[RMDB]
Notes
The record gives the reactivity of an RNA of 177 nucleotides to DMS and 2A3.

RNA sequence: GGGAACGACUCGAGUAGAGUCGAAAAACUGCCUGUUUCGACAGGCAGUAGUCUACUUCGCGCAACCGCCGAGUCGUUCCCGCGGUUGCGUGAAGUAGUUAGAUAUGAUCUUAUUCGUAAGAUCAAAAUAGUGCUUAAGUUUCGACUUAAGCACUAUAAAAGAAACAACAACAACAAC
Reactivity to DMS in 0.01 (KOAc 150mM, MgCl2 10mM, bicine 150mM(pH8.5), 24C), signal-to-noise 5, nucleotides 027 to 126: a020c000u000g000c000c000u000g000u000u000u020c170g020a060c010a010g010g000c000a000g010u010a040g010u010c000u000a010c000u000u000c010g010c000g000c010a010a000c010c000g010c010c210g010a130g010u000c000g000u000u000c000c000c010g020c010g000g000u000u000g010c010g020u000g010a010a010g010u000a000g010u000u010a060g010a160u010a100u010g000a010u000c000u000u000a030u000u010c190g010u000a000a010g000a010u000c000a040a050a110
Reactivity to 2A3 in 0.01 (KOAc 150mM, MgCl2 10mM, bicine 150mM(pH8.5), 24C), signal-to-noise 2, nucleotides 027 to 126: a000c000u000g020c000c010u020g020u030u100u080c190g090a020c000a000g000g020c000a000g000u000a000g010u040c000u000a010c000u000u000c010g000c000g010c000a000a000c000c000g010c030c140g120a070g030u000c000g010u010u000c000c000c000g000c000g000g010u030u000g000c000g000u000g000a010a010g000u000a010g000u000u030a000g000a020u130a090u220g000a010u000c000u000u020a030u040u070c130g070u030a010a010g000a010u000c000a010a050a020
The reactions ran in a buffer of 150 mM KOAc, 10 mM MgCl2 and 150 mM bicine (pH 8.5), at 24 C. For 2A3, 4,775 sequencing reads were counted.